[RMDB]
Notes:
Source: RMDB library OK1LIB, as collected in RNAgym. Structure probing data (2A3) for a 177-nucleotide construct. The RNA was probed in 150 mM KOAc, 10 mM MgCl2 and 150 mM bicine (pH 8.5) at 24 C. 2A3 adducts were read by reverse transcription with SuperScript II with manganese.
RNA sequence: GGGAACGACUCGAGUAGAGUCGAAAAGUCGAAUCGGUUCUUCGUGACUUGAGCGAGGCGGCCGACAAGUGGGAGGCGCUCGUCACGCAGGCUGAAACUGUUACCUACAGCGUGGACUUGGGAGACGGCUAGCCGCUAGGUUCGCCUAGCGGCUAGCAAAAGAAACAACAACAACAAC
Reactivity to 2A3 in 0.01 (KOAc 150mM, MgCl2 10mM, bicine 150mM(pH8.5), 24C), signal-to-noise 1, nucleotides 027 to 126: g040u080c020g110a110a120u090c020g000g070u200u300c000u000u000c020g010u000g010a020c000u130u300g020a040g000c000g010a000g120g070c000g110g010c030c000g070a040c020a160a130g000u130g070g080g000a040g000g000c000g010c020u000c000g020u000c000a000c010g000c000a000g020g000c000u080g000a000a120a000c000u010g050u100u060a090c040c000u000a000c000a000g000c020g050u130g000g080a020c060u170u030g110g000g000a070g050a000c000g010